[RMDB]
RNA sequence: GGGAACGACUCGAGUAGAGUCGAAAAUCUGUAACCUGUGCCUUCUGUUCCCCUUAUCUUGGAUCUUCAUUGGGGUGGGUGAGCACUUGGUCUUCAAAGCAAAGUUGCUGGAUUCAUGGGGAAAGCAGAGGAACUUAUCUUUCGAGAUAAGUUCCUCAAAAGAAACAACAACAACAAC
Reactivity to 2A3 in 0.01 (KOAc 150mM, MgCl2 10mM, bicine 150mM(pH8.5), 24C), signal-to-noise 2, nucleotides 027 to 126: u030c000u050g100u060a010a030c010c010u010g010u040g020c000c000u130u040c070u050g080u060u050c050c000c020c000u040u170a110u140c030u010u050g100g050a060u090c010u160u070c140a120u060u100g030g060g010g000u070g000g000g040u040g040a020g000c040a010c000u020u080g050g000u040c050u080u070c070a100a040a000g020c010a050a070a090g040u170u080g060c010u020g050g020a070u070u080c020a060u130g030g000g010g000a020a020a100g030c050a020
Reactivity to DMS in 0.01 (KOAc 150mM, MgCl2 10mM, bicine 150mM(pH8.5), 24C), signal-to-noise 3, nucleotides 027 to 126: u010c060u010g010u010a130a070c050c030u010g020u010g000c030c020u000u020c070u000g000u010u000c000c020c010c120u000u010a080u010c090u020u020g020g010a060u000c090u000u000c110a080u010u010g000g000g010g010u010g010g010g000u000g010a100g020c030a030c030u010u010g010g010u000c070u010u000c170a100a100a090g000c050a070a100a100g030u000u000g030c010u000g010g000a140u000u000c100a050u010g010g000g000g000a040a060a110g020c170a110